[RMDB]
RNA sequence: GGGAACGACUCGAGUAGAGUCGAAAAAUCAGAAUCUAUGAGAUAACUUUAGAACAAAGAUCAGAGGAAAACCUAUGGCAUUAAACAAGGAGGUACAUAAUGUCAGUAUGUCUCAUUACUGAUGAUACUUAUGUUGACAAUUUGGUUACAGUGGCCAAGGUGUUAAAUGCUUCGGCAUUUAACACCUAAAAGAAACAACAACAACAAC
Reactivity to 2A3 in 0.01 (KOAc 150mM, MgCl2 10mM, bicine 150mM(pH8.5), 24C), signal-to-noise 1, nucleotides 027 to 156: a010u020c010a010g070a030a050u110c070u040a130u150g110a040g010a100u060a040a060c010u060u080u110a060g040a040a020c060a300a000a000g050a020u090c040a010g010a030g000g000a000a010a020a020c000c000u070a230u030g030g000c000a000u000u030a000a020a000c010a020a000g000g000a000g000g030u040a000c010a040u110a020a150u170g010u000c000a000g000u030a060u110g010u000c060u000c100a040u070u090a050c060u030g000a040u030g010a010u050a070c030u080u080a070u120g020u090u000g030a050c020a070a120u100u000u020g000g000u020u000a070c090a070g000u020g080g010c020c030a020